[RMDB]
RNA sequence: GGGAACGACUCGAGUAGAGUCGAAAAAAGGAAGCUUCUGGGGGAAGCGUCCCGGUGCUGCCACCGGGAUCGCACCUUCUCUCUCUUCCGGAGCAGACGGGUCGGUUCAGGUGCCUGCUCCCGCCCUGAUGGUGGCGCCAGACUCUGACACUGAAGACUCACCAUACCAUUUCGAUGGUAUGGUGAGAAAAGAAACAACAACAACAAC
Reactivity to 2A3 in 0.01 (KOAc 150mM, MgCl2 10mM, bicine 150mM(pH8.5), 24C), signal-to-noise 1, nucleotides 027 to 156: a010a000g060g080a040a010g030c010u230u100c130u300g010g010g000g000g030a020a020g030c010g010u000c000c010c000g000g000u030g000c210u200g150c210c010a000c020c000g000g010g010a030u030c020g000c020a120c000c000u020u050c020u010c000u000c040u010c000u020u000c000c020g010g000a020g000c010a000g000a050c070g030g070g050u050c010g050g070u110u070c040a030g040g040u000g060c000c000u000g020c020u010c000c000c000g040c000c000c010u100g080a160u150g070g100u090g030g000c000g000c090c000a020g020a030c030u030c020u150g020a000c030a000c030u120g050a100a010g120a060